Notes:
Chemical mapping of a 177-nucleotide RNA with 2A3 and DMS. For 2A3 the reverse transcriptase was SuperScript II with manganese. The DMS profile rests on 2,005 reads. DMS adducts were read by reverse transcription with MarathonRT. The 2A3 profile rests on 2,949 reads.
[RMDB]
RNA sequence: GGGAACGACUCGAGUAGAGUCGAAAAGUGUAUCCCGCUACACCAGCACGGCCCGACAUCGCCUACGCCGUGGUGCCGAUGGGACUGCCGAGCUCACAACUACUGCAGCCACACGCUUUAUGAAGGAGACGAAUACAAGGUUCGCCUUGUAUUCGUCAAAAGAAACAACAACAACAAC
Reactivity to 2A3 in 0.01 (KOAc 150mM, MgCl2 10mM, bicine 150mM(pH8.5), 24C), signal-to-noise 2, nucleotides 027 to 126: g040u040g020u040a110u060c050c010c000g000c030u080a030c060a020c060c020a000g020c030a010c010g030g000c000c030c000g060a050c020a130u070c070g020c030c000u050a050c100g140c080c020g000u030g000g040u090g020c020c000g090a070u090g020g000g090a060c010u060g020c010c000g030a020g000c010u000c020a060c020a050a080c030u170a050c030u040g020c040a010g010c010c000a020c000a010c000g030c020u090u120u120a190u210g130a110a040g140g060a120
Reactivity to DMS in 0.01 (KOAc 150mM, MgCl2 10mM, bicine 150mM(pH8.5), 24C), signal-to-noise 3, nucleotides 027 to 126: g010u010g010u000a130u000c030c020c000g030c220u000a100c110a080c060c040a090g000c060a100c060g010g000c000c070c060g030a060c040a040u010c060g010c020c010u010a100c170g030c060c100g010u000g010g010u000g010c090c060g020a120u000g010g000g020a110c050u000g020c020c080g000a140g000c020u010c110a060c120a070a100c050u010a070c090u000g020c050a080g010c020c030a070c050a040c080g000c030u010u010u000a100u010g010a070a090g010g010a250